[RMDB]
RNA sequence: GGGAACGACUCGAGUAGAGUCGAAAAGCACAAAACUAACAAGGCACGGUUUAGGAGGGAUCAGCAUCAAGUCUGGCAGACUGAAUCACAAGCUGACCACCUUGGCAAGGUGGACAGAAUAUGGCCUUCAAAGUCAGAGGGACCUUCAUACCUGCCAGGAGCUAAAUGGGUUCGCCCAUUUAGCUCCAAAAGAAACAACAACAACAAC
Reactivity to 2A3 in 0.01 (KOAc 150mM, MgCl2 10mM, bicine 150mM(pH8.5), 24C), signal-to-noise 1, nucleotides 027 to 156: g070c010a000c010a040a020a040a080c090u190a160a020c120a170a200g010g000c040a050c170g010g000u040u010u070a050g000g000a000g000g050g000a090u060c010a120g020c020a080u080c050a100a050g150u050c010u110g050g040c030a000g040a170c020u060g000a020a040u140c040a000c000a130a050g060c000u010g010a020c000c000a010c000c000u060u060g160g050c110a000a000g000g000u000g020g020a030c030a000g010a050a000u150a080u100g020g000c010c000u010u010c000a120a060a010g040u010c040a000g000a020g020g010g030a020c030c000u000u010c000a080u030a080c000c000u020g000c000c000a000
The record gives the reactivity of an RNA of 207 nucleotides to 2A3. 2A3 adducts were read by reverse transcription with SuperScript II with manganese. It was measured as part of the RMDB library OK3TST. Values cover nucleotides 27 to 156. The 2A3 profile rests on 601 reads.